About this RNA:
An RNA of 177 nucleotides, treated with 2A3 and DMS and read out base by base. For DMS the reverse transcriptase was MarathonRT. The data come from the RNA Mapping Database (RMDB), library OK2TRN.

RNA sequence: GGGAACGACUCGAGUAGAGUCGAAAACAAUUGCUCGCAAGAUCGUUGAUCUGCACUCGAAGAUCGAGGAGUCCGUGGAGCGGGCAUAUACGCGCGAAGAGGUCCUUCGCUAUGUGACAUUUGCGCGACCAGCUAAUAGUUUCGACUAUUAGCUGGUAAAAGAAACAACAACAACAAC
Reactivity to 2A3 in 0.01 (KOAc 150mM, MgCl2 10mM, bicine 150mM(pH8.5), 24C), signal-to-noise 7, nucleotides 027 to 126: c020a030a140u120u050g010c000u000c010g000c020a050a050g020a130u050c050g130u090u120g020a040u060c050u110g070c080a100c060u040c020g130a210a140g150a300u160c010g000a030g020g030a040g080u010c020c030g100u080g030g040a060g010c000g000g010g000c000a010u050a000u020a080c020g000c000g000c000g010a030a020g080a070g220g090u020c010c000u060u090c110g030c200u110a120u120g120u130g010a010c010a030u010u010u030g000c010g000c010g020
Reactivity to DMS in 0.01 (KOAc 150mM, MgCl2 10mM, bicine 150mM(pH8.5), 24C), signal-to-noise 6, nucleotides 027 to 126: c060a130a090u010u010g020c000u000c000g020c030a160a190g010a080u000c030g020u000u010g000a010u000c000u000g030c120a150c120u010c090g000a130a130g010a080u000c000g010a030g010g000a090g020u000c040c100g020u010g000g010a300g000c010g000g000g010c010a030u000a050u000a190c030g030c030g010c000g020a020a020g010a200g010g010u000c010c040u000u010c300g020c180u010a030u010g000u010g010a030c030a230u000u000u000g010c000g010c020g010